Background:
An RNA of 177 nucleotides, treated with 2A3 and read out base by base.
RNA sequence: GGGAACGACUCGAGUAGAGUCGAAAAAGAGGAACUCGUUGCCGGAGCGGCGCGCCGAGUCGCCGUUGCAGGUUUCCCCAGCGCCCAGCACCAAGUAUUUCACCCCGGCGACGGCGAGCAGCUCGGCCACCCUUGCUCAAUUCGUUGAGCAAGGGUGAAAAGAAACAACAACAACAAC
Reactivity to 2A3 in 0.01 (KOAc 150mM, MgCl2 10mM, bicine 150mM(pH8.5), 24C), signal-to-noise 4, nucleotides 027 to 126: a000g140a060g070g060a090a070c040u020c050g050u060u050g000c020c050g090g030a030g000c000g020g000c000g000c010g000c000c010g070a070g080u030c000g000c000c000g010u020u080g030c070a030g020g030u010u060u060c010c000c000c000a020g050c010g020c020c010c000a020g010c000a010c010c030a100a020g030u060a130u020u120u100c040a050c000c000c000c000g000g000c000g000a020c000g000g000c000g000a010g010c000a000g000c000u000c000g000g000c000

The RNA was probed in 150 mM KOAc, 10 mM MgCl2 and 150 mM bicine (pH 8.5) at 24 C.